[RMDB]
RNA sequence: GGGAACGACUCGAGUAGAGUCGAAAAGUGCCUCGUCGGCCCGGCAUGCCAACCUGAUCCGAAGUUCAAGGUGGUUUCUCUGGCCUUCUAGAGAGAUGCGCGUCGGAAGAACCGACGAACAAACCUUAAAACAAAACGACGUUCGCGUCGUUUUGAACUGAGUAUGAGACUUCGGUCUCAUACUCAGAAAAGAAACAACAACAACAAC
Reactivity to 2A3 in 0.01 (KOAc 150mM, MgCl2 10mM, bicine 150mM(pH8.5), 24C), signal-to-noise 2, nucleotides 027 to 156: g050u030g090c030c030u000c000g030u000c020g020g000c010c000c000g000g000c040a040u130g050c030c010a080a130c040c030u030g010a030u060c030c050g080a080a020g040u040u050c040a020a010g040g020u000g000g000u000u110u000c010u010c000u030g070g000c020c080u110u100c000u050a030g000a000g010a000g020a070u100g040c080g000c000g020u020c010g010g030a120a030g020a140a150c000c000g000a000c000g010a020a000c030a020a050a100c010c020u180u280a090a170a030a100c000a000a000a000a000c000g000a000c010g010u040u040c230g000c000g100u010c000g000u000u000u020u000g000a010a010